The record gives the reactivity of an RNA of 177 nucleotides to DMS. The RNA was probed in 150 mM KOAc, 10 mM MgCl2 and 150 mM bicine (pH 8.5) at 24 C. For DMS the reverse transcriptase was MarathonRT. Source: RMDB library OK2TRN, as collected in RNAgym. For DMS, 503 sequencing reads were counted. Values are in units of 0.01, from 0 to 300, in steps of 10.

[RMDB]
RNA sequence: GGGAACGACUCGAGUAGAGUCGAAAAAGUGUGACAAUUGCAGACUACUCGGUGGAUCUGAAGUUUGGGUGGAAAGCCACUACCAAGUCCGCCCCUACUGAAGCAGAGAUGGAAAGCAUGAGAGCUGAGGUUAUAGACCGUUCGCGGUCUAUAACCUAAAAGAAACAACAACAACAAC
Reactivity to DMS in 0.01 (KOAc 150mM, MgCl2 10mM, bicine 150mM(pH8.5), 24C), signal-to-noise 1, nucleotides 027 to 126: a160g100u010g010u000g020a130c070a050a050u020u000g010c040a050g010a300c000u000a010c020u000c030g000g020u000g010g010a300u000c300u000g050a130a090g020u000u000u000g000g000g050u000g000g000a050a050a200g000c100c000a030c070u010a090c160c060a100a110g030u000c000c000g010c080c050c030c050u000a020c010u000g040a200a300g000c030a030g010a050g060a040u010g010g020a010a240a130g010c060a030u040g000a130g000a260g000c060u000g020